This 177-nucleotide RNA was probed chemically with DMS. For DMS, 2,281 sequencing reads were counted. The RNA was probed in 150 mM KOAc, 10 mM MgCl2 and 150 mM bicine (pH 8.5) at 24 C.
RNA sequence: GGGAACGACUCGAGUAGAGUCGAAAAUGCUGGUGCUGAAACGGGCACGGUCUUCGCCCUGCGCGUCGGCGAGAUAGCAGUUGACCAUGAGCUCGUAGUUGAGGGCCUCGGCGGCGUGGCCCUUGGCAGCUCCAGACAUUUUCGAAUGUCUGGAGCUAAAAGAAACAACAACAACAAC
Reactivity to DMS in 0.01 (KOAc 150mM, MgCl2 10mM, bicine 150mM(pH8.5), 24C), signal-to-noise 2, nucleotides 027 to 126: u010g020c020u020g000g010u000g010c010u000g000a080a120a070c040g000g020g020c030a140c220g010g030u000c070u010u000c100g010c040c040c030u000g000c030g010c020g000u000c140g000g000c040g010a040g010a070u010a080g020c030a080g010u000u000g000a130c020c010a180u010g020a100g000c040u000c030g020u010a120g000u010u000g020a030g000g000g000c000c020u000c030g010g010c160g000g010c010g030u000g020g000c000c000c010u000u000g000g020c030